RNA sequence: GGGAACGACUCGAGUAGAGUCGAAAAGAUAUGGAGAGGACAUUGCUACACGUUUGACGUCGGAAACGACCGAGUGUAGAACUACAAUUUGUCCUCUCCUAAGUCAAAACGGAAGUUCGCUUCCGAAGAUAUGAAGGCGGUUCGCCGCCUUCAUAUCAAAAGAAACAACAACAACAAC
Reactivity to DMS in 0.01 (KOAc 150mM, MgCl2 10mM, bicine 150mM(pH8.5), 24C), signal-to-noise 1, nucleotides 027 to 126: g000a060u000a300u000g000g000a040g000a010g000g020a020c000a000u040u020g000c050u000a020c020a020c000g010u000u020u040g040a080c300g010u000c000g000g010a100a050a110c010g000a020c000c020g020a040g030u000g000u000a000g010a030a040c160u030a220c040a020a020u000u000u010g000u000c000c010u000c040u000c000c000u010a000a080g000u000c030a100a010a130a260c020g010g000a050a010g030u000u000c260g040c040u000u000c000c000g040a100a090
The record gives the reactivity of an RNA of 177 nucleotides to DMS. It was measured as part of the RMDB library TTRDEL. The RNA was probed in 150 mM KOAc, 10 mM MgCl2 and 150 mM bicine (pH 8.5) at 24 C. For DMS, 739 sequencing reads were counted. For DMS the reverse transcriptase was MarathonRT.